[RMDB]
RNA sequence: GGGAACGACUCGAGUAGAGUCGAAAAGAUAUGGAGCAUGCAGACAUGCUGUAUCGGAAACGAUAUGGCAACAGCUGUUGUGCUCCUAAGUCAAACCGCAUCUAUAAGUUCGCUUAUAGAUGCGGAAGUUAUAACCGGAGUUCGCUCCGGUUAUAACAAAAGAAACAACAACAACAAC
Reactivity to DMS in 0.01 (KOAc 150mM, MgCl2 10mM, bicine 150mM(pH8.5), 24C), signal-to-noise 4, nucleotides 027 to 126: g000a030u000a300u010g010g000a010g020c000a010u000g000c010a010g000a070c100a230u000g000c000u000g010u010a010u010c000g000g000a110a040a140c000g010a020u000a000u000g010g010c010a030a060c300a140g000c010u000g010u010u020g040u000g000c000u000c000c000u000a000a050g000u010c030a080a110a160c000c000g000c000a000u000c010u000a000u000a000a000g010u000u010c280g020c000u000u000a010u000a000g000a010u000g000c000g010g000a010a010
Reactivity to 2A3 in 0.01 (KOAc 150mM, MgCl2 10mM, bicine 150mM(pH8.5), 24C), signal-to-noise 4, nucleotides 027 to 126: g010a010u030a030u090g000g000a000g000c010a000u020g000c020a010g220a300c050a240u030g000c000u000g010u000a000u000c010g010g000a020a020a010c020g000a000u010a000u020g040g000c010a050a050c070a110g070c000u020g010u300u240g030u030g000c000u000c000c000u000a010a010g010u000c020a020a050a090c000c000g000c010a000u010c000u000a010u000a020a030g030u050u130c210g110c230u000u000a000u000a010g000a000u000g000c000g000g000a000a000
The record gives the reactivity of an RNA of 177 nucleotides to DMS and 2A3. The RNA was probed in 150 mM KOAc, 10 mM MgCl2 and 150 mM bicine (pH 8.5) at 24 C. For DMS the reverse transcriptase was MarathonRT. For 2A3, 11,032 sequencing reads were counted.